[RMDB]
RNA sequence: GGGAACGACUCGAGUAGAGUCGAAAAUUUGUCAAAGGGAGAGCGUUGGAAUGUGAUAGUGUUCUCUCAAAGUACAUCUUCUCUAGAGGGAAGAAAACGGCCAGCGUCUUGAGAAGAACGCUGACCUUGCAGCACGUCAAUAGAAAGUGCGAAGAGAUGUACACUCAUCCUUCGGGAUGAGUGUACAAAAAGAAACAACAACAACAAC
Reactivity to 2A3 in 0.01 (KOAc 150mM, MgCl2 10mM, bicine 150mM(pH8.5), 24C), signal-to-noise 2, nucleotides 027 to 156: u050u060u110g040u010c040a030a100a090g000g000g000a020g000a040g010c050g030u040u050g090g130a200a200u220g080u140g120a120u120a060g050u030g010u010u000c000u010c000u000c020a050a050a000g010u000a010c030a070u000c020u000u000c020u020c010u050a130g070a210g160g020g000a020a040g000a020a080a050a000c040g000g000c010c000a000g000c000g040u050c070u090u230g010a250g020a130a000g010a000a000c020g000c000u000g010a020c000c010u000u050g010c020a000g010c000a040c000g020u020c090a020a030u110a150g080a120a160a010g030u040g010c000g000a060a010g040a000g000a040
About this RNA
The data come from the RNA Mapping Database (RMDB), library OK3TST. Structure probing data (2A3) for a 207-nucleotide construct. Values cover nucleotides 27 to 156. For 2A3, 962 sequencing reads were counted.